Notes: Conditions: 150 mM KOAc, 10 mM MgCl2 and 150 mM bicine (pH 8.5), 24 C. An RNA of 177 nucleotides, treated with 2A3 and DMS and read out base by base. DMS (dimethyl sulfate) methylates the pairing face of unpaired adenines and cytosines.

[RMDB]
RNA sequence: GGGAACGACUCGAGUAGAGUCGAAAAUAUCUAUGGUAAUUUAAAGUAAGGCUGAUUAUAUAACACGAUUUUUGUGAACUUGUCAUCGCUAUGAUGACUGGUAAAACGAUAUUGCCUUAUUCACAUCGAGUACAACGAUGUUCGCAUCGUUGUACUCAAAAGAAACAACAACAACAAC
Reactivity to 2A3 in 0.01 (KOAc 150mM, MgCl2 10mM, bicine 150mM(pH8.5), 24C), signal-to-noise 5, nucleotides 027 to 126: u110a040u030c070u070a080u130g090g040u140a160a220u080u130u250a180a120a030g000u000a010a000g000g000c010u030g060a160u170u090a090u060a100u090a170a030c110a020c120g120a170u090u020u040u120u070g010u030g050a030a030c000u010u000g010u000c000a010u000c030g080c220u180a090u300g010a010u010g000a000c000u000g000g000u020a000a000a050a030c060g040a020u020a050u070u140g020c000c000u000u000a010u030u080c060a040c020a090u110c110
Reactivity to DMS in 0.01 (KOAc 150mM, MgCl2 10mM, bicine 150mM(pH8.5), 24C), signal-to-noise 3, nucleotides 027 to 126: u030a080u000c040u020a070u040g000g010u010a050a090u030u040u050a040a140a100g000u000a040a020g020g010c000u020g030a040u010u000a110u000a100u000a080a200c090a060c050g030a170u000u030u040u010u030g000u010g000a180a030c000u000u000g010u010c000a010u000c000g040c210u080a060u020g000a000u000g000a020c000u000g000g000u000a010a060a010a020c140g000a040u030a020u000u000g000c000c000u000u000a020u000u020c220a030c180a100u050c160
It was measured as part of the RMDB libraries RFM100 and RFMREP.